[RMDB]
Source: RMDB library TTRINS, as collected in RNAgym. Chemical mapping of a 177-nucleotide RNA with DMS. Conditions: 150 mM KOAc, 10 mM MgCl2 and 150 mM bicine (pH 8.5), 24 C. Values cover nucleotides 27 to 126. For DMS the reverse transcriptase was MarathonRT. For DMS, 1,245 sequencing reads were counted.

RNA sequence: GGGAACGACUCGAGUAGAGUCGAAAAGAUAUGGACACUCACUCUGGAGACGCGUAAACUAAGACAGAGGUUCGGAAACGAACCUUCGAGUUUACCGGCGUCGUUGAAAGAGUGAGUGUCCUAAGUCCUAGGAAAGAGGGUUCGCCCUCUUUCCUAGAAAAGAAACAACAACAACAAC
Reactivity to DMS in 0.01 (KOAc 150mM, MgCl2 10mM, bicine 150mM(pH8.5), 24C), signal-to-noise 2, nucleotides 027 to 126: g010a060u000a270u010g030g010a050c000a010c000u000c000a000c000u020c000u000g000g000a170g000a030c000g020c020g010u000a000a020a010c010u030a210a150g000a170c300a130g000a010g010g020u010u000c000g000g010a120a150a200c000g000a000a000c010c000u000u010c030g010a000g010u000u000u000a000c060c210g080g080c010g030u000c000g010u000u000g020a190a130a020g000a040g030u000g000a000g010u000g000u010c000c000u000a000a050g000u000c050